RNA sequence: GGGAACGACUCGAGUAGAGUCGAAAACCAAUGGGAAACCAUUGGCAACUCGGAAACGAGUUGAACCGGUAAUUACCCGAAAAUCCGGCGACAAUGCGAUUUUAAGCAUUGUCGAUUACGCCCAUGUCGAUUUUAAGACAUGGAGCGAAUUCGGGAAGGUUCGAGGUCCGUUCGCGGACUUUGAACCAAAAGAAACAACAACAACAAC
Reactivity to DMS in 0.01 (KOAc 150mM, MgCl2 10mM, bicine 150mM(pH8.5), 24C), signal-to-noise 3, nucleotides 027 to 156: c000c000a020a020u010g020g000g010a270a110a190c010c000a000u000u040g010g000c010a020a050c000u000c030g000g010a130a100a190c000g000a010g010u000u000g000a040a040c010c050g000g040u010a040a070u000u000a120c010c020c010g010a060a120a300a060u010c020c000g000g000c000g000a040c000a020a000u000g000c020g010a300u010u000u010u010a130a250g000c010a000u000u000g010u000c000g000a010u000u000a030c010g010c000c060c010a010u000g010u000c000g000a300u000u010u000u010a040a150g000a050c000a000u000g010g000a030g020c000g020a040a010u000u000c000g000g010g000a050a220
Reactivity to 2A3 in 0.01 (KOAc 150mM, MgCl2 10mM, bicine 150mM(pH8.5), 24C), signal-to-noise 6, nucleotides 027 to 156: c000c000a000a000u000g000g000g000a030a020a010c000c000a000u000u000g000g000c000a000a000c000u000c010g020g030a080a060a050c010g000a000g010u000u010g010a060a040c000c000g000g000u040a080a090u060u080a090c000c000c000g000a000a000a000a000u000c000c000g000g000c000g000a000c000a000a010u000g000c010g120a190u020u060u110u300a080a010g000c000a000u000u000g000u000c000g000a000u000u010a100c000g000c000c000c000a000u000g000u000c020g050a120u030u090u070u300a120a020g000a000c000a000u000g000g000a010g000c000g000a000a000u030u030c010g000g000g000a000a020